[RMDB]
RNA sequence: GGGAACGACUCGAGUAGAGUCGAAAAAGCACUGGUACGAUACGUCGUACCAGUGCAGUCGUUGGGAUGGAACGCAAUUAAAUACAUGUGUGACGUGUAUUUGCGAACGACGUAAUUGUUUUUCAAAAUCACGCUAUCGUGUUCGCACGAUAGCGAAGUCUUUGCUAGUGUUCGCACUAGCAAAGACAAAAGAAACAACAACAACAAC
Reactivity to 2A3 in 0.01 (KOAc 150mM, MgCl2 10mM, bicine 150mM(pH8.5), 24C), signal-to-noise 2, nucleotides 027 to 156: a000g020c000a040c000u000g020g010u000a000c000g030a010u000a040c210g150u000c000g000u020a000c000c000a000g010u000g000c000a000g000u000c020g010u070u050g140g000g080a130u070g020g090a080a060c020g000c020a020a030u180u220a110a050a020u080a020c030a020u000g060u010g190u300g200a050c050g000u020g000u020a000u000u040u060g000c000g010a050a000c020g040a010c040g020u100a050a100u060u040g050u040u010u010u050u090c070a060a080a040a100u230c110a020c010g000c010u000a000u000c000g000u010g020u070u040c120g000c030a000c000g000a000u000a000g000c000g000a000a000